[RMDB]
The data come from the RNA Mapping Database (RMDB), library OK2TST.
Chemical mapping of a 177-nucleotide RNA with 2A3 and DMS.
RNA sequence: GGGAACGACUCGAGUAGAGUCGAAAAGCCGGACGCUGGGGUCGGGGGUUGGUGGGCCGAGCAGCCGAUGACGCCACCGAGCACGGUUGCCAUUGCCAACAGCGACGGUAUGAGUCGCACCAUGUAACCAUACAAAUAUCUUCGGAUAUUUGUAUGGAAAAGAAACAACAACAACAAC
Reactivity to 2A3 in 0.01 (KOAc 150mM, MgCl2 10mM, bicine 150mM(pH8.5), 24C), signal-to-noise 3, nucleotides 027 to 126: g060c020c000g000g020a100c080g040c170u080g000g010g080g140u210c100g060g020g020g030g020u080u010g060g110u130g030g040g000c050c010g010a050g010c000a010g000c010c000g060a080u090g050a030c090g020c050c020a090c070c060g000a040g000c020a020c030g020g000u000u010g000c020c000a070u060u170g060c030c010a070a030c070a160g000c000g000a000c030g020g000u230a200u210g050a040g000u000c000g010c020a010c020c010a040u140g060u120a060a080
Reactivity to DMS in 0.01 (KOAc 150mM, MgCl2 10mM, bicine 150mM(pH8.5), 24C), signal-to-noise 5, nucleotides 027 to 126: g020c040c080g010g010a140c130g000c140u010g010g040g000g010u010c120g020g010g000g010g030u010u010g000g000u000g020g010g000c190c210g010a070g000c020a050g010c020c010g000a110u000g000a090c120g010c040c060a070c110c120g010a090g020c040a110c030g010g010u000u000g010c010c040a090u000u020g010c070c070a050a090c120a090g010c010g010a030c020g000g010u010a080u010g010a160g010u000c010g010c040a140c150c090a040u010g000u010a090a180
The 2A3 profile rests on 5,530 reads.
The DMS profile rests on 5,012 reads.